[RMDB]
An RNA of 177 nucleotides, treated with 2A3 and DMS and read out base by base.
The 2A3 profile rests on 6,846 reads.
Source: RMDB library OK2TRN, as collected in RNAgym.
For DMS the reverse transcriptase was MarathonRT.
The RNA was probed in 150 mM KOAc, 10 mM MgCl2 and 150 mM bicine (pH 8.5) at 24 C.
RNA sequence: GGGAACGACUCGAGUAGAGUCGAAAAAUCACGGCCGACAGGCCGUACGGAUCGGUACCGGCCGUACGAUCUAGGCCCAUGUGCGCCAUAUGAUCUCGACUGGAUCGCGCAGUACGUAGUACCACGGGCGUAAGUAUUGGUUCGCCAAUACUUACGCAAAAGAAACAACAACAACAAC
Reactivity to 2A3 in 0.01 (KOAc 150mM, MgCl2 10mM, bicine 150mM(pH8.5), 24C), signal-to-noise 4, nucleotides 027 to 126: a000u100c040a030c030g000g000c000c010g090a120c060a120g000g000c000c000g010u000a010c040g040g030a200u110c050g040g110u130a160c110c000g010g000c010c000g000u030a010c020g000a010u000c010u060a060g010g000c000c020c000a100u160g050u050g010c070g020c000c030a110u090a100u270g040a060u020c040u050c080g130a100c080u120g040g010a050u050c020g010c000g000c040a000g020u050a080c070g040u060a020g040u000a050c000c040a050c080g070g100
Reactivity to DMS in 0.01 (KOAc 150mM, MgCl2 10mM, bicine 150mM(pH8.5), 24C), signal-to-noise 5, nucleotides 027 to 126: a090u010c080a080c180g010g010c000c000g010a140c300a080g000g010c030c000g010u000a010c050g010g010a040u010c040g020g020u010a050c080c030g000g010c020c020g000u000a020c030g000a010u000c010u010a180g020g010c010c010c100a140u000g010u000g010c080g000c020c140a090u020a100u000g000a040u000c010u000c060g010a130c100u000g000g000a060u000c020g000c040g020c040a040g020u000a070c070g000u010a090g010u000a110c020c050a130c150g000g000